[RMDB]
RNA sequence: GGGAACGACUCGAGUAGAGUCGAAAAAGUUAUGAGUUCGCUCAUAACUACAGCGAAAGGCGCUCGGACCCGCAGUCCGCCGAAGGCAUCCCACCCUGUCCAAGUUGGUAUAUUUCGAUAUACCAAACUUAGCUUACUGUUUCGACAGUAAGCUAAGAAAAGAAACAACAACAACAAC
Reactivity to DMS in 0.01 (KOAc 150mM, MgCl2 10mM, bicine 150mM(pH8.5), 24C), signal-to-noise 4, nucleotides 027 to 126: a070g000u000u000a000u000g000a010g010u010u000c240g000c010u000c000a000u010a000a000c000u010a060c090a300g000c030g000a030a080a110g010g000c030g020c040u000c070g010g000a080c050c300c040g020c040a060g010u000c050c000g020c020c010g020a080a060g000g000c130a060u000c010c010c000a150c100c070c050u010g010u000c030c060a100a080g020u000u000g000g000u000a000u000a010u000u000u010c150g000a010u000a000u000a010c000c000a000a030a110
Reactivity to 2A3 in 0.01 (KOAc 150mM, MgCl2 10mM, bicine 150mM(pH8.5), 24C), signal-to-noise 2, nucleotides 027 to 126: a000g000u000u000a000u010g010a010g030u030u120c180g090c050u000c000a000u000a000a000c000u010a020c010a020g000c010g100a140a030a030g040g010c000g010c050u050c080g080g010a060c020c000c090g010c050a010g020u030c030c030g000c000c030g040a010a020g160g030c040a040u030c000c000c020a030c020c010c020u070g030u030c050c030a090a050g080u030u010g010g000u010a010u000a010u020u110u070c200g050a000u000a010u010a040c000c000a020a010a010